Notes: Structure probing data (2A3) for a 207-nucleotide construct. The 2A3 profile rests on 1,108 reads. The reactions ran in a buffer of 150 mM KOAc, 10 mM MgCl2 and 150 mM bicine (pH 8.5), at 24 C.

RNA sequence: GGGAACGACUCGAGUAGAGUCGAAAAACACGAACGUGAACACUCGAACUCGUGUGAACUCGUUCGUUCGUUCACACUCGUGAGAUCUCGUGAGUUCACGAGAACUCACUCACUCGUGAGUGUACGAACUCUCACUCGAGUGAUCACGUACGAGAGAUAGUUGGGCCCCUUUCGAGGGGCCCAACUAAAAAGAAACAACAACAACAAC
Reactivity to 2A3 in 0.01 (KOAc 150mM, MgCl2 10mM, bicine 150mM(pH8.5), 24C), signal-to-noise 2, nucleotides 027 to 156: a000c060a000c020g010a050a000c010g000u000g030a050a020c030a020c010u000c020g020a110a040c090u070c290g030u000g000u010g020a040a070c050u110c210g010u050u030c020g000u030u050c000g000u010u000c060a000c000a010c020u060c010g000u000g010a000g000a030u020c030u000c060g000u020g040a300g110u300u300c010a000c070g110a150g000a070a050c040u020c010a030c030u060c020a060c010u080c090g040u010g000a010g000u010g000u030a000c010g010a010a010c000u000c010u010c090a000c030u030c000g000a000g000u000g010a030u010c010a010c000g010u020a030c040g000a020g000a020g040a050